[RMDB]
RNA sequence: GGGAACGACUCGAGUAGAGUCGAAAAGUAAACCGGGGGACUCCCUAUGUUUCACAGAUGACAAUAGCAAAAUAUGGUUUCCAGAUGAUGAUGAUAAACUAGUGGCUACAGGUCAUUGUCCGGAUGACAGGUGCACAUGUUUCGACAUGUGCACCUGAAAAGAAACAACAACAACAAC
Reactivity to 2A3 in 0.01 (KOAc 150mM, MgCl2 10mM, bicine 150mM(pH8.5), 24C), signal-to-noise 2, nucleotides 027 to 126: g260u180a240a000a090c100c040g060g000g000g000g240a050c100u170c000c000c000u000a040u040g090u000u110u000c040a000c000a030g230a090u030g130a000c010a100a160u060a170g040c020a020a020a020a010u210a300u030g000g000u020u000u000c000c000a020g000a150u250g000a050u000g030a050u040g050a060u260a000a000a030c000u020a040g140u010g150g000c000u000a040c010a000g150g070u000c010a000u040u050g000u000c040c010g020g060a070u200g040a040

Structure probing data (2A3) for a 177-nucleotide construct. The RNA was probed in 150 mM KOAc, 10 mM MgCl2 and 150 mM bicine (pH 8.5) at 24 C. It was measured as part of the RMDB library OK1LIB. For 2A3 the reverse transcriptase was SuperScript II with manganese.